[RMDB]
RNA sequence: GGGAACGACUCGAGUAGAGUCGAAAAUGCUUAAAAUUCUGUCUUCUUCUGUUCUUUCUAAUUGACUAGCACAGUUAGAUAUUUGUCCUGAAUCAUUUUAGUUAUUAAUUCAUUAUUUCAACAAGUAAAGAUUGAAUACCUCUUUUGGGCUAGGCAACUACCAUAUUAGCUUCGGCUAAUAUGGUAGAAAAGAAACAACAACAACAAC
Reactivity to 2A3 in 0.01 (KOAc 150mM, MgCl2 10mM, bicine 150mM(pH8.5), 24C), signal-to-noise 2, nucleotides 027 to 156: u080g000c010u090u060a150a130a130a090u280u070c050u030g070u010c070u090u060c000u120u040c080u110g040u080u000c020u030u050u000c000u030a040a090u040u040g050a080c020u020a020g020c060a010c000a020g050u040u010a000g030a040u020a080u070u080u130g020u010c020c070u030g070a080a060u060c030a090u070u100u160u090a030g040u030u110a100u070u160a190a030u140u060c030a010u040u250a110u050u120u060c030a040a040c000a100a000g040u080a220a020a000g050a060u060u130g010a020a010u050a060c010c010u030c000u090u010u060u070g030g000g020c010u000a000g010g000c000a010a010